[RMDB]
RNA sequence: GGGAACGACUCGAGUAGAGUCGAAAACGUAUCGGAAAAUAGGGAAAGGUUAUAGAAGGAUGGAGUUUCUAUAAAGCAUUUACCCUAUCUGUUAUCACCUAACGCAAGUUAUCCACCAUCCAAGCGUAAGAGAUCUCCUUUUCGAAGGAGAUCUCUUAAAAGAAACAACAACAACAAC
Reactivity to 2A3 in 0.01 (KOAc 150mM, MgCl2 10mM, bicine 150mM(pH8.5), 24C), signal-to-noise 2, nucleotides 027 to 126: c020g020u070a050u120c020g040g000a000a180a020a030u000a010g060g020g000a000a000a000g000g010u020u000a000u000a000g020a050a060g130g010a020u290g160g010a170g160u060u000u000c000u000a010u010a020a020a000g130c100a100u020u020u170a260c000c000c000u000a010u010c000u030g100u050u040a090u110c010a060c090c070u000a020a000c050g000c020a030a060g000u000u060a010u090c030c010a030c040c000a040u000c030c000a000a020g080c050g130u060
Reactivity to DMS in 0.01 (KOAc 150mM, MgCl2 10mM, bicine 150mM(pH8.5), 24C), signal-to-noise 1, nucleotides 027 to 126: c090g000u000a030u010c000g000g000a120a010a100a120u040a030g000g000g020a110a040a020g010g040u000u020a040u040a020g000a020a090g010g000a050u040g000g000a300g000u020u000u000c010u000a030u030a020a010a030g020c080a090u040u010u000a120c000c000c030u000a030u030c050u000g000u080u030a120u030c090a070c010c000u010a000a040c060g000c070a040a080g010u000u000a020u030c060c040a110c000c020a050u000c000c020a100a090g020c000g030u010

The record gives the reactivity of an RNA of 177 nucleotides to 2A3 and DMS. For 2A3 the reverse transcriptase was SuperScript II with manganese. Values are in units of 0.01, from 0 to 300, in steps of 10. Source: RMDB library RFM100, as collected in RNAgym.